[RMDB]
RNA sequence: GGGAACGACUCGAGUAGAGUCGAAAAGUAGACGAUGAACAUGACGAUGACAGGAGAAGGGCAUUACACGAAGAGUCAACACGCUGGAAUCGAGUGGGAAUUCUUCCAGAGCUGUGUAAGGCAGUAGCGGAUGAUUAGCAUUCGUGCUAAUCAUCCGAAAAGAAACAACAACAACAAC
Reactivity to 2A3 in 0.01 (KOAc 150mM, MgCl2 10mM, bicine 150mM(pH8.5), 24C), signal-to-noise 2, nucleotides 027 to 126: g050u090a010g000a050c050g030a070u060g030a090a020c020a070u070g060a040c030g070a040u080g040a010c000a020g050g030a030g070a060a040g010g030g000c000a040u000u180a050c070a010c040g100a090a050g050a020g110u030c010a070a050c020a030c050g080c000u020g000g050a090a100u140c080g030a020g010u060g000g050g030a010a000u090u000c000u000u020c030c020a020g000a030g100c100u030g000u030g000u080a040a070g080g020c000a050g000u030a040g040
Reactivity to DMS in 0.01 (KOAc 150mM, MgCl2 10mM, bicine 150mM(pH8.5), 24C), signal-to-noise 2, nucleotides 027 to 126: g000u020a040g010a080c060g030a020u000g010a060a050c080a070u010g010a080c070g010a080u000g000a060c110a050g000g010a120g000a090a070g020g000g000c090a050u000u010a060c110a040c130g010a090a040g000a090g020u000c060a070a080c070a070c060g000c100u010g010g020a050a060u000c150g020a060g020u000g010g000g000a090a050u020u000c030u010u020c010c020a040g000a070g020c010u000g000u010g010u010a040a100g000g000c110a080g020u000a060g010
Notes
An RNA of 177 nucleotides, treated with 2A3 and DMS and read out base by base. The 2A3 profile rests on 1,880 reads. The DMS profile rests on 1,877 reads. Source: RMDB library OK2TRN, as collected in RNAgym. The reactions ran in a buffer of 150 mM KOAc, 10 mM MgCl2 and 150 mM bicine (pH 8.5), at 24 C.